[RMDB]
RNA sequence: GGGAACGACUCGAGUAGAGUCGAAAAGGGCGAAAGCGGGAAAGUAGCCCAGUACGAAACCGCGAAAGAUCGAAAGAUUGGGUGAUCGAAAGAUCGAAAGCCCGAAAGCCGGAAACGGCGAAAGAAAGGCAAAUGAUUAGUUCGCUAAUCAUUUGCCAAAAGAAACAACAACAACAAC
Reactivity to 2A3 in 0.01 (KOAc 150mM, MgCl2 10mM, bicine 150mM(pH8.5), 24C), signal-to-noise 2, nucleotides 027 to 126: g020g000g000c020g040a120a100a000g000c010g000g000g020a110a270a060g020u010a000g000c000c000c000a000g000u000a000c010g000a080a100a040c000c000g010c030g060a070a020a010g040a030u020c020g010a110a070a000g010a000u000u010g000g020g020u240g010a000u000c010g000a130a010a000g000a000u010c030g000a050a060a000g000c000c000c000g000a040a000a000g000c010c000g000g000a020a050a120c020g020g000c100g000a040a070a000g100a040a060a030
Reactivity to DMS in 0.01 (KOAc 150mM, MgCl2 10mM, bicine 150mM(pH8.5), 24C), signal-to-noise 2, nucleotides 027 to 126: g000g000g020c010g000a070a150a160g000c010g000g000g020a090a040a170g000u000a020g010c000c000c010a140g000u010a010c000g010a060a170a210c000c010g000c000g010a160a010a210g010a020u010c000g000a100a070a040g000a020u000u000g010g000g080u000g000a010u000c000g020a120a050a110g000a010u000c020g000a170a070a130g010c000c000c000g000a040a020a100g030c030c000g000g010a030a140a150c000g000g000c000g000a040a130a070g020a110a090a090
The record gives the reactivity of an RNA of 177 nucleotides to 2A3 and DMS.
The reactions ran in a buffer of 150 mM KOAc, 10 mM MgCl2 and 150 mM bicine (pH 8.5), at 24 C.
For DMS, 2,997 sequencing reads were counted.